Structure probing data (2A3 and DMS) for a 177-nucleotide construct. For 2A3 the reverse transcriptase was SuperScript II with manganese.

RNA sequence: GGGAACGACUCGAGUAGAGUCGAAAAUGCAUGUACUAGGGUACGAGUACACAGUACCAUGUCAUGCACGAUCAGCGUGACUAGUCUCCAUGCAUGAGUGACUCAUGCAUGACAUGGAUCUGAUCACAUCUGCUGGGGGAUUCGUCCCCCAGCAGAUAAAAGAAACAACAACAACAAC
Reactivity to 2A3 in 0.01 (KOAc 150mM, MgCl2 10mM, bicine 150mM(pH8.5), 24C), signal-to-noise 1, nucleotides 027 to 126: u100g020c040a040u090g010u160a010c020u100a110g100g220g000u040a030c020g020a050g160u130a070c130a030c030a060g000u020a080c000c000a010u020g030u000c000a010u000g030c010a010c030g000a030u020c020a000g010c010g090u040g070a080c040u060a030g050u010c020u010c070c030a050u000g020c010a030u000g000a010g140u270g130a040c030u000c030a000u000g010c000a000u010g010a010c010a010u090g000g010a070u020c020u030g030a060u090c000a020c020
Reactivity to DMS in 0.01 (KOAc 150mM, MgCl2 10mM, bicine 150mM(pH8.5), 24C), signal-to-noise 2, nucleotides 027 to 126: u000g000c020a030u000g040u010a000c020u000a090g010g000g000u000a000c050g000a190g010u000a130c200a040c200a140g030u000a140c020c000a090u000g000u010c050a020u000g000c030a030c080g000a040u000c020a050g000c200g020u000g010a090c050u010a070g000u030c030u000c090c000a010u000g000c000a040u000g010a000g020u010g000a130c150u010c010a010u000g000c030a000u000g020a140c130a020u010g040g000a130u000c030u020g020a060u000c000a060c180
DMS adducts were read by reverse transcription with MarathonRT.
DMS (dimethyl sulfate) methylates the pairing face of unpaired adenines and cytosines.